Source: RMDB library OK2TST, as collected in RNAgym. The record gives the reactivity of an RNA of 177 nucleotides to DMS and 2A3.
RNA sequence: GGGAACGACUCGAGUAGAGUCGAAAACUUUAUCAUAAGGGAGGAACAAAGACUGGGGCUCCUGCUGACAUCUGCAGACACAAAGCUGAGUCGGAAUUUGUGGUCUUAGCUUCGGUUCAGCACCAAGCUAGUCAAGCAUUUUCGAAUGCUUGACUAGAAAAGAAACAACAACAACAAC
Reactivity to DMS in 0.01 (KOAc 150mM, MgCl2 10mM, bicine 150mM(pH8.5), 24C), signal-to-noise 2, nucleotides 027 to 126: c060u000u000u000a060u020c080a050u010a090a090g040g000g010a100g000g010a070a090c080a070a070a090g010a100c060u000g040g000g010g030c030u010c070c060u000g000c060u000g000a030c030a060u000c060u000g010c040a080g010a090c140a060c150a030a070a100g000c020u000g000a000g020u000c030g000g000a030a110u000u000u000g020u000g000g000u000c050u000u010a070g020c080u000u020c110g020g000u000u000c060a010g010c040a140c110c060a040a050g010
Reactivity to 2A3 in 0.01 (KOAc 150mM, MgCl2 10mM, bicine 150mM(pH8.5), 24C), signal-to-noise 2, nucleotides 027 to 126: c010u060u100u080a240u230c030a060u080a190a070g030g020g010a050g050g020a070a030c020a070a110a020g090a110c050u060g010g000g070g020c010u030c010c000u020g030c020u010g000a010c010a110u040c010u080g000c010a030g060a090c020a000c040a140a120a020g050c030u030g000a000g040u050c000g060g000a030a100u050u050u090g070u090g040g050u010c000u060u010a020g000c000u020u040c060g070g010u000u050c010a030g000c000a020c020c020a030a030g030

The DMS profile rests on 1,880 reads. The RNA was probed in 150 mM KOAc, 10 mM MgCl2 and 150 mM bicine (pH 8.5) at 24 C.